[RMDB]
RNA sequence: GGGAACGACUCGAGUAGAGUCGAAAACCGCCCGUCACUAUCUCAGAUGUUUUUCAGGAUGAAGAGUCCAGGCUCUGAAUAAUGAAAAGUAGAUAAGAUGUAAGUCGUAACAAGGUUGCGGUCGGUGCUAUCUGCUGUGUUUCGACACAGCAGAUAGAAAAGAAACAACAACAACAAC
Reactivity to DMS in 0.01 (KOAc 150mM, MgCl2 10mM, bicine 150mM(pH8.5), 24C), signal-to-noise 5, nucleotides 027 to 126: c000c030g020c070c020c010g010u010c110a030c040u020a040u000c020u000c070a030g000a130u010g010u010u000u000u000u010c030a030g000g020a030u010g010a210a030g000a040g000u010c020c170a190g010g010c010u010c000u000g000a250a010u000a020a030u010g000a010a020a020a020g000u000a030g000a140u000a100a030g000a030u000g000u020a060a100g020u000c060g000u020a050a060c160a150a140g020g010u010u010g010c080g000g010u000c010g000g010u000g010
Reactivity to 2A3 in 0.01 (KOAc 150mM, MgCl2 10mM, bicine 150mM(pH8.5), 24C), signal-to-noise 7, nucleotides 027 to 126: c010c000g010c010c000c000g030u020c040a010c030u050a030u050c020u000c050a080g030a140u080g080u010u000u000u030u030c020a010g010g000a050u020g020a030a020g040a010g030u020c060c060a080g140g000c000u000c000u000g030a030a010u060a060a010u030g020a000a000a020a010g060u060a010g020a080u070a080a070g010a040u100g080u180a090a090g070u100c060g050u070a040a050c060a120a110g050g000u020u030g020c010g000g010u010c010g000g020u040g030